RNA sequence: GGGAACGACUCGAGUAGAGUCGAAAAGUUGGAGCAGAUGAGGGCGGCUGCUCCCAGGGCCCGUAGCCUGCCGCAUUCCGUUUACGGGGCAGGAGCCGAGACGCGGGUCACCCUCAUCCGCACUCGCGCAGCAUAGAAUAUUCGUAUUCUAUGCUGCAAAAGAAACAACAACAACAAC
Reactivity to 2A3 in 0.01 (KOAc 150mM, MgCl2 10mM, bicine 150mM(pH8.5), 24C), signal-to-noise 4, nucleotides 027 to 126: g210u240u190g010g000a010g000c010a000g010a110u170g010a120g000g010g010c010g000g000c010u010g010c010u010c010c000c000a010g010g000g000c000c000c000g000u020a030g080c000c000u010g010c000c010g130c090a160u270u160c030c030g060u080u130u200a100c060g030g000g030g000c010a010g020g010a020g090c080c040g070a040g010a030c110g000c000g000g000g000u010c010a020c000c010c000u060c050a130u020c000c010g000c010a010c000u000c010g010c010
Reactivity to DMS in 0.01 (KOAc 150mM, MgCl2 10mM, bicine 150mM(pH8.5), 24C), signal-to-noise 6, nucleotides 027 to 126: g030u010u010g020g010a030g000c000a010g000a110u010g010a010g000g000g010c020g000g000c010u000g000c000u000c000c000c020a050g000g000g010c000c010c010g020u000a130g030c010c000u000g010c010c010g020c200a210u010u010c040c030g010u000u010u010a100c060g020g010g000g010c010a030g000g000a110g020c110c100g000a070g010a240c100g000c010g000g000g010u000c000a020c000c000c000u010c170a080u010c010c000g000c000a050c000u000c010g020c290

Chemical mapping of a 177-nucleotide RNA with 2A3 and DMS. For 2A3, 10,528 sequencing reads were counted. The reactions ran in a buffer of 150 mM KOAc, 10 mM MgCl2 and 150 mM bicine (pH 8.5), at 24 C. For 2A3 the reverse transcriptase was SuperScript II with manganese. The DMS profile rests on 13,721 reads.